[RMDB]
Source information:
This 177-nucleotide RNA was probed chemically with DMS and 2A3. The reactions ran in a buffer of 150 mM KOAc, 10 mM MgCl2 and 150 mM bicine (pH 8.5), at 24 C. The data come from the RNA Mapping Database (RMDB), library OK1LIB. For 2A3, 22,805 sequencing reads were counted. DMS adducts were read by reverse transcription with MarathonRT.

RNA sequence: GGGAACGACUCGAGUAGAGUCGAAAAAUGUUUUUGCUUCGACGCUAACACAAUCUCUGCUUUUCUCUGGCAGGCCACACGUCGCCUUUGGCGGCAGCGGUUGCUAGCAACAGUUCGUCGGUGGCCAAAAAUUAGUAGGAUUCGUCCUACUAAUUUUAAAAGAAACAACAACAACAAC
Reactivity to DMS in 0.01 (KOAc 150mM, MgCl2 10mM, bicine 150mM(pH8.5), 24C), signal-to-noise 9, nucleotides 027 to 126: a080u020g010u000u010u010u010u010g010c030u010u010c110g000a090c070g010c040u010a040a050c080a090c100a080a090u010c020u010c020u010g000c020u000u010u020u010c030u000c030u010g010g010c080a070g010g000c010c030a040c070a130c130g020u000c000g010c050c010u010u030u020g010g020c040g010g000c010a070g000c060g000g000u000u000g000c040u020a110g000c100a050a120c080a050g010u010u000c080g010u020c070g010g020u010g000g010c020c070a020
Reactivity to 2A3 in 0.01 (KOAc 150mM, MgCl2 10mM, bicine 150mM(pH8.5), 24C), signal-to-noise 9, nucleotides 027 to 126: a000u100g050u030u030u020u050u090g030c020u070u110c060g060a040c040g020c060u070a100a010c020a020c030a130a150u030c040u020c010u050g030c020u070u050u070u020c040u010c010u030g080g000c050a080g050g020c020c000a080c010a020c060g020u020c000g000c010c000u130u070u260g030g000c010g010g000c000a010g010c020g060g010u030u030g010c020u070a050g020c010a010a060c020a060g020u120u120c020g040u020c040g080g030u040g010g000c010c010a030